[RMDB]
RNA sequence: GGGAACGACUCGAGUAGAGUCGAAAAACAGAGAAGAAGGCCAUCAAGAAGGCACUGCAAUUUGCCGAGGCAGCCACAGCGUGGCAAAGGCAGAGAGUGCAGCAAGAGGCACUCAAGGCUUUAGCCGUCUACUAGACCAGUUCGCUGGUCUAGUAGAAAAAGAAACAACAACAACAAC
Reactivity to DMS in 0.01 (KOAc 150mM, MgCl2 10mM, bicine 150mM(pH8.5), 24C), signal-to-noise 4, nucleotides 027 to 126: a100c080a080g010a080g010a100a080g000a080a070g000g020c040c030a050u000c100a100a170g010a100a080g000g000c030a090c090u010g020c100a040a070u000u000u000g010c020c020g030a090g020g000c040a070g030c040c070a040c090a080g010c130g020u000g020g010c020a040a040a060g000g020c010a030g000a300g010a020g010u000g010c000a060g010c090a090a100g000a120g000g010c010a020c020u010c030a040a180g000g000c030u000u000u000a100g030c030c030g020
Reactivity to 2A3 in 0.01 (KOAc 150mM, MgCl2 10mM, bicine 150mM(pH8.5), 24C), signal-to-noise 3, nucleotides 027 to 126: a010c040a020g080a010g020a130a010g050a040a020g060g000c030c010a100u090c050a060a060g120a040a040g050g030c030a010c060u040g000c020a110a240u010u040u130g000c010c020g010a050g060g020c030a020g050c030c010a060c030a060g150c080g110u070g000g000c000a020a040a020g010g020c010a010g010a010g000a000g010u010g010c000a010g040c030a140a050g050a150g130g000c010a010c020u000c010a020a080g090g000c000u070u050u070a040g010c010c010g030